[RMDB]
RNA sequence: GGGAACGACUCGAGUAGAGUCGAAAAAUCGAGCCGAUAUCGAUGGGAGUUUGCCAAAAGAGUAGCCAAUAGAUACGGCUGCGCCAUCGCCUGCGUUGCACUCAAUUUGCUUGAUUAUUGCGCACAGCGCACGGGUGAGCUUCGGCUCACCCGUGCGAAAAGAAACAACAACAACAAC
Reactivity to 2A3 in 0.01 (KOAc 150mM, MgCl2 10mM, bicine 150mM(pH8.5), 24C), signal-to-noise 3, nucleotides 027 to 126: a000u060c040g010a030g050c000c000g130a110u040a040u060c050g010a110u080g000g090g000a130g100u110u130u180g080c020c010a110a150a000a070g050a040g060u040a030g020c000c000a100a140u090a160g060a010u080a090c040g030g000c000u000g000c000g050c070c000a020u070c040g020c040c000u030g000c070g110u070u080g040c050a020c030u020c010a090a170u030u050u150g080c050u040u040g020a070u040u140a090u120u130g020c040g000c000a030c000a020g080
Reactivity to DMS in 0.01 (KOAc 150mM, MgCl2 10mM, bicine 150mM(pH8.5), 24C), signal-to-noise 1, nucleotides 027 to 126: a130u000c010g000a050g000c000c050g000a220u090a000u020c050g010a130u050g000g000g000a110g030u020u070u000g030c000c050a100a040a130a170g000a160g030u000a020g090c030c010a080a020u000a200g000a130u000a000c040g000g050c080u000g000c120g020c040c000a140u020c050g020c000c110u000g020c030g020u000u000g000c090a020c100u000c130a070a040u020u040u020g030c000u000u000g020a160u000u010a050u000u000g000c020g040c000a090c300a060g010